Chemical mapping of a 177-nucleotide RNA with DMS.
For DMS, 545 sequencing reads were counted.
For DMS the reverse transcriptase was MarathonRT.
Reactivities are given for positions 27 through 126.
Reactivities are rounded to 0.1 and cut off at 0 and 3.
RNA sequence: GGGAACGACUCGAGUAGAGUCGAAAAAUUGAGGUCACCUUUGAGAUCGACGCCAAUGGCAUCCUCAACGUCGGCGCUGAGGACAAGGGAACCGGCAAGCGGGAGAAGAUUACGAUAACGAACGACACCAGUGAGAAGGGUUCGCCCUUCUCACUGGAAAAGAAACAACAACAACAAC
Reactivity to DMS in 0.01 (KOAc 150mM, MgCl2 10mM, bicine 150mM(pH8.5), 24C), signal-to-noise 1, nucleotides 027 to 126: a170u010u000g000a090g010g010u000c040a120c060c050u000u020u000g000a040g030a060u010c090g080a040c090g030c040c030a030a030u000g000g000c060a140u000c010c030u000c010a030a040c090g010u000c090g030g040c010g050c000u020g000a050g000g030a090c080a020a060g000g040g010a070a060c110c010g080g020c160a060a160g010c110g000g000g040a050g000a000a100g010a130u000u010a120c170g010a030u030a070a000c120g000a030a040c090g000a190c220a050